[RMDB]
RNA sequence: GGGAACGACUCGAGUAGAGUCGAAAAACAACAGAUAGCUGGAACCAGCGUAGAAUUCUACGCAUAUCCAUAGCGAAUGGUACCUGUAAAGAAAAUAAUUGUGGAUGUACAAGUACCAACAGCCGCGAAUGCCAUGGUGAUGUCAAUCACAUAUGCAUACUCCCCAUCAGUUCGCUGAUGGGGAGUAAAAAGAAACAACAACAACAAC
Reactivity to 2A3 in 0.01 (KOAc 150mM, MgCl2 10mM, bicine 150mM(pH8.5), 24C), signal-to-noise 1, nucleotides 027 to 156: a010c090a000a090c090a000g150a170u190a050g000c050u000g000g020a070a090c190c000a050g000c000g000u000a020g060a300a300u300u300c000u000a020c030g050c000a000u030a000u170c000c000a090u030a000g000c000g000a140a050u050g000g000u000a000c010c010u000g000u060a000a000a050g120a090a140a080a110u260a090a000u220u170g080u000g110g110a000u020g030u020a020c000a000a000g020u000a000c000c000a000a110c090a020g150c140c080g000c110g110a030a000u030g000c070c100a000u060g070g040u000g020a060u080g230u140c170a000a000u060c000a050c050a030u080a000u060g000c000a030